[RMDB]
RNA sequence: GGGAACGACUCGAGUAGAGUCGAAAAACAUUCAGCAAUGAAUGAAUGGGAUAACUGAAAAAAGACAACAAGUGAGCAUCGUCCCAAAGACCUAAAGUGCUUAUGCCUGUAAUGAGGCCCAACUAGAGUCCUAGUAGUCGUUCGCGACUACUAGGACAAAAGAAACAACAACAACAAC
Reactivity to DMS in 0.01 (KOAc 150mM, MgCl2 10mM, bicine 150mM(pH8.5), 24C), signal-to-noise 1, nucleotides 027 to 126: a060c000a000u030u030c020a010g000c180a100a280u000g020a030a020u000g010a070a090u000g000g000g060a030u000a060a070c110u020g000a000a070a000a040a040a080g000a020c080a090a140c050a140a030g050u010g000a100g000c020a000u010c240g000u000c010c000c100a060a070a080g030a140c010c050u000a040a100a100g000u000g010c080u000u000a120u010g000c010c060u000g000u000a140a080u020g000a010g020g050c080c160c050a080a100c110u010a100g000a280